[RMDB]
Source: RMDB library OK1LIB, as collected in RNAgym. Chemical mapping of a 177-nucleotide RNA with DMS and 2A3. For DMS the reverse transcriptase was MarathonRT. The 2A3 profile rests on 3,082 reads. The reactions ran in a buffer of 150 mM KOAc, 10 mM MgCl2 and 150 mM bicine (pH 8.5), at 24 C.
RNA sequence: GGGAACGACUCGAGUAGAGUCGAAAAUGAUGCAGUCGACUUAAUUUAUGAAGAAGAACCAGACAUCGUAUUACUAGAUAUCAUGUUACCUGGUCGUGAUGGUAUGGAAGUAUGUCGUGAAGUGCGCCUACCCUUAGGCGUUCGCGCCUAAGGGUAGAAAAGAAACAACAACAACAAC
Reactivity to DMS in 0.01 (KOAc 150mM, MgCl2 10mM, bicine 150mM(pH8.5), 24C), signal-to-noise 4, nucleotides 027 to 126: u000g020a030u000g010c070a170g000u020c010g030a070c030u000u000a060a100u010u010u030a090u020g010a070a100g040a090a120g000a090a140c040c050a050g000a050c050a050u010c080g010u010a120u000u010a070c130u020a090g010a040u020a010u020c180a040u020g000u000u020a020c090c010u010g020g000u000c040g040u020g010a030u010g000g030u030a030u010g000g010a040a080g000u020a060u010g010u020c020g000u020g030a070a100g020u010g020c100g000c120
Reactivity to 2A3 in 0.01 (KOAc 150mM, MgCl2 10mM, bicine 150mM(pH8.5), 24C), signal-to-noise 4, nucleotides 027 to 126: u190g040a020u060g020c050a010g030u020c020g010a010c000u060u030a090a110u190u100u160a160u240g150a060a120g060a100a010g010a020a020c000c000a000g060a040c010a000u020c020g040u050a070u110u060a060c050u030a030g060a120u060a010u130c060a050u050g070u070u050a090c010c010u010g030g020u030c050g050u040g050a060u070g040g030u150a030u080g070g030a030a020g030u090a030u120g020u020c000g000u000g090a120a050g070u020g010c000g020c000
Annotation
For DMS, 5,552 sequencing reads were counted.